RNA sequence: GGGAACGACUCGAGUAGAGUCGAAAAUACCCCCUGUAAUGUCUGUCAAUAUUGGAUUGGAUAUGGGUGCAAUUGUGACUCGCUUAGGCAAGCAGCACUGCCCCAAUCUAAAGAUUCCAAUUUUUUAAUACCAGAAGCUUCGGCUUCUGGAAAAGAAACAACAACAACAAC
Reactivity to 2A3 in 0.01 (KOAc 150mM, MgCl2 10mM, bicine 150mM(pH8.5), 24C), signal-to-noise 2, nucleotides 027 to 129: u060a000c000c000c000c000c100u040g010u090a030a140u070g080u120c120u040g180u050c130a010a180u060a050u040u070g000g000a000u000u000g000g000a010u140a300u120g010g000g070u090g030c050a090a170u200u210g040u010g050a300c010u090c180g010c000u030u010a110g210g000c070a030a000g000c000a000g010c000a000c020u040g000c000c030c020c000a000a020u000c040u020a090a050a000g070a100u040u020c000c000a010a030u000u000u050u000u030u100a030a040u050a040
Reactivity to DMS in 0.01 (KOAc 150mM, MgCl2 10mM, bicine 150mM(pH8.5), 24C), signal-to-noise 1, nucleotides 027 to 129: u030a260c110c000c000c000c010u070g000u020a070a030u000g050u040c120u000g050u000c070a100a040u050a080u000u000g000g030a000u000u070g000g000a000u010a120u030g000g060g080u090g000c030a160a100u030u000g010u050g000a190c020u020c150g060c000u040u120a230g000g000c180a030a020g030c140a060g060c090a100c030u000g020c110c010c010c000a010a050u030c000u000a030a160a090g020a090u130u000c020c010a000a020u050u100u030u000u000u260a090a300u040a090
An RNA of 170 nucleotides, treated with 2A3 and DMS and read out base by base. The RNA was probed in 150 mM KOAc, 10 mM MgCl2 and 150 mM bicine (pH 8.5) at 24 C. For DMS the reverse transcriptase was MarathonRT.